Chemical mapping of a 177-nucleotide RNA with 2A3 and DMS. Conditions: 150 mM KOAc, 10 mM MgCl2 and 150 mM bicine (pH 8.5), 24 C. DMS adducts were read by reverse transcription with MarathonRT. The DMS profile rests on 20,626 reads.
RNA sequence: GGGAACGACUCGAGUAGAGUCGAAAAUUAGGACAACCACAGCAGAGCACUGAACCAGGAACCAGGACUUUCUAAGGGUUGGGUUGCCUGUGACUGCACUGGCGAUACCCCCACAAAGCCCACUCUAUACCAUACUAAUGUUCGCAUUAGUAUGGUAAAAAGAAACAACAACAACAAC
Reactivity to 2A3 in 0.01 (KOAc 150mM, MgCl2 10mM, bicine 150mM(pH8.5), 24C), signal-to-noise 6, nucleotides 027 to 126: u080u030a030g040g030a020c010a040a020c030c020a020c000a040g030c020a010g030a020g050c030a020c070u070g030a060a040c030c000a030g000g050a020a020c020c010a030g020g060a040c030u070u130u040c060u230a090a160g060g020g020u070u060g050g020g010u020u060g120c000c000u030g000u030g040a050c080u100g020c020a010c030u020g020g000c010g020a020u180a200c010c000c000c010c000a040c030a030a100a010g010c000c010c000a030c010u020c000u010a050
Reactivity to DMS in 0.01 (KOAc 150mM, MgCl2 10mM, bicine 150mM(pH8.5), 24C), signal-to-noise 9, nucleotides 027 to 126: u010u010a090g010g010a080c070a070a090c030c030a070c100a110g010c040a050g000a110g010c060a050c080u010g010a090a090c120c050a050g000g000a070a050c050c020a060g000g000a050c050u000u000u000c120u020a110a120g010g010g010u000u010g010g000g010u000u000g010c010c000u010g010u000g010a120c140u000g020c040a060c060u000g000g010c020g010a110u010a140c030c010c020c020c020a080c180a050a060a080g010c010c010c010a100c100u000c060u000a190